RNA sequence: GGGAACGACUCGAGUAGAGUCGAAAAGAUAUGGAACAGAACUACUCGCAAACAGGCGACGAAGAGUCAUAUAGCUCGGAAACGAGCUAUAUGACUCAGAGCCUGGUAGCGAGCUGUUCCUAAGUCACUUGAAGUAAGAGUUCGCUCUUACUUCAAGAAAAGAAACAACAACAACAAC
Reactivity to 2A3 in 0.01 (KOAc 150mM, MgCl2 10mM, bicine 150mM(pH8.5), 24C), signal-to-noise 1, nucleotides 027 to 126: g040a000u090a020u170g000g010a000a000c020a020g030a070a050c050u250a060c010u300c000g000c000a260a300a260c010a000g000g070c040g100a160c110g070a300a300g000a060g010u000c010a000u020a010u000a030g000c040u040c000g030g000a100a000a030c000g000a000g000c050u010a010u010a000u000g000a000c010u000c000a010g000a000g000c000c000u010g020g000u020a000g010c000g010a000g020c000u010g010u010u000c000c000u010a060a030g000u000c000a000
Reactivity to DMS in 0.01 (KOAc 150mM, MgCl2 10mM, bicine 150mM(pH8.5), 24C), signal-to-noise 3, nucleotides 027 to 126: g000a040u000a300u000g010g000a030a020c010a030g010a070a030c040u020a300c000u000c010g000c010a040a220a300c010a000g000g020c000g000a200c280g010a140a100g000a030g000u000c000a010u000a010u010a020g000c010u000c000g000g000a080a060a200c020g010a000g020c000u000a000u000a000u010g000a010c000u000c000a030g000a190g000c000c000u000g010g000u000a300g000c000g010a010g010c000u000g000u000u000c000c000u000a020a070g000u000c030a290

Notes:
This 177-nucleotide RNA was probed chemically with 2A3 and DMS. The reactions ran in a buffer of 150 mM KOAc, 10 mM MgCl2 and 150 mM bicine (pH 8.5), at 24 C. The data come from the RNA Mapping Database (RMDB), library TTRINS. DMS adducts were read by reverse transcription with MarathonRT.